[RMDB]
RNA sequence: GGGAACGACUCGAGUAGAGUCGAAAAGGGGAACGCCGAGAAUUGAAACAUCUUAGUAUCGGCAGGAAGAGAAAACGUAACCGUGAUGUCGUUAGUAACGGCGAGUGAACGCGACACAGUCCAAACCGAUGCCGAUGUAUUUCGAUACAUCGGCAUCAAAAGAAACAACAACAACAAC
Reactivity to DMS in 0.01 (KOAc 150mM, MgCl2 10mM, bicine 150mM(pH8.5), 24C), signal-to-noise 2, nucleotides 027 to 126: g060g000g030g000a130a070c240g000c000c000g000a020g000a160a100u000u030g020a050a090a050c250a080u020c010u000u010a020g040u000a010u010c080g000g000c040a200g000g010a040a100g000a140g010a140a010a100a130c050g000u010a090a160c030c030g000u040g000a100u000g000u000c010g010u000u000a070g000u010a130a020c020g000g020c190g000a190g000u000g000a130a120c140g010c000g020a000c030a010c080a060g000u010c040c020a050a200a170c200c120
Reactivity to 2A3 in 0.01 (KOAc 150mM, MgCl2 10mM, bicine 150mM(pH8.5), 24C), signal-to-noise 3, nucleotides 027 to 126: g060g010g030g000a060a010c070g020c020c000g020a000g000a140a020u040u060g080a090a160a050c160a170u060c030u060u050a010g000u000a000u000c000g000g000c040a000g110g080a020a030g090a030g000a020a040a100a000c050g070u110a050a030c050c000g030u050g010a210u020g030u010c000g020u000u010a000g000u000a010a000c000g160g060c150g040a030g000u010g000a000a010c000g000c000g000a010c000a000c000a000g040u000c010c010a090a030a010c040c080